[RMDB]
RNA sequence: GGGAACGACUCGAGUAGAGUCGAAAAGCGCUCGUCGAGCGCAUGGCCGACGAUCACGCGGUGCGCGAGCGCGUCUGGCGCGAAGCGCGCGAUCUCGUCUACAACGUGAUCAAUUGCAGCAAGCCGAAUCAGUAUUUAUGUUCGCAUAAAUACUGAUAAAAGAAACAACAACAACAAC
Reactivity to 2A3 in 0.01 (KOAc 150mM, MgCl2 10mM, bicine 150mM(pH8.5), 24C), signal-to-noise 9, nucleotides 027 to 126: g000c010g020c010u020c020g300u130c190g070a020g020c010g000c020a010u040g070g000c020c020g040a080c080g000a020u010c010a010c020g020c020g020g030u040g000c050g000c000g010a010g000c020g000c000g030u060c110u180g180g000c040g000c100g140a080a020g030c020g000c000g000c000g020a050u020c020u000c010g040u000c010u040a030c020a060a010c010g000u010g000a000u020c030a020a080u150u160g050c070a070g010c030a090a040g020c020c010g040a060
Reactivity to DMS in 0.01 (KOAc 150mM, MgCl2 10mM, bicine 150mM(pH8.5), 24C), signal-to-noise 9, nucleotides 027 to 126: g010c000g020c010u000c010g020u010c180g010a030g020c010g020c010a030u010g010g010c020c040g010a140c190g000a020u000c010a010c010g020c300g010g010u000g010c300g010c030g010a090g010c030g000c020g010u000c090u010g020g010c020g010c090g010a100a150g010c070g010c000g010c020g000a060u010c010u000c020g010u000c050u010a040c060a050a040c010g010u000g000a010u000c010a120a140u010u000g020c110a100g010c080a120a130g000c020c040g010a160